An RNA of 177 nucleotides, treated with 2A3 and DMS and read out base by base. For 2A3 the reverse transcriptase was SuperScript II with manganese. The data come from the RNA Mapping Database (RMDB), library OK1LIB. The reactions ran in a buffer of 150 mM KOAc, 10 mM MgCl2 and 150 mM bicine (pH 8.5), at 24 C. For DMS the reverse transcriptase was MarathonRT. For 2A3, 2,568 sequencing reads were counted. For DMS, 3,754 sequencing reads were counted.

[RMDB]
RNA sequence: GGGAACGACUCGAGUAGAGUCGAAAACUAUGUACAGACAGUACAGUGGAUAAGGUCUCUGGAUAUCCAACUUUAACAAUGGUACUUGCAGUGGUAUCUAUCAAGAUAGGCAGGCUAUCAUAGAAAGAAGACGUGUCUUAUUCGUAGGACGCGUCUUAAAAGAAACAACAACAACAAC
Reactivity to 2A3 in 0.01 (KOAc 150mM, MgCl2 10mM, bicine 150mM(pH8.5), 24C), signal-to-noise 2, nucleotides 027 to 126: c020u050a060u100g010u010a000c010a130g160a050c050a050g100u010a020c010a050g050u050g080g000a100u060a190a090g160g130u060c030u000c000u150g000g040a160u040a040u000c020c030a070a100c110u100u150u070a170a070c110a130a070u060g020g010u010a010c000u010u010g010c040a090g030u070g130g070u070a020u010c000u020a180u130c070a070a040g010a020u020a010g070g000c000a010g020g020c050u010a000u020c000a000u030a020g130a040a090a000g100
Reactivity to DMS in 0.01 (KOAc 150mM, MgCl2 10mM, bicine 150mM(pH8.5), 24C), signal-to-noise 1, nucleotides 027 to 126: c030u000a000u030g000u000a020c020a070g000a060c210a120g010u020a010c010a100g050u030g000g030a140u000a100a280g030g030u030c130u020c070u000g000g000a300u000a000u000c030c050a070a300c090u010u050u000a070a080c180a080a040u000g010g010u000a020c030u000u010g000c030a080g000u030g030g010u000a010u000c000u010a040u070c190a050a020g010a030u000a020g010g000c030a020g000g010c220u000a000u000c000a030u000a070g020a040a070a050g000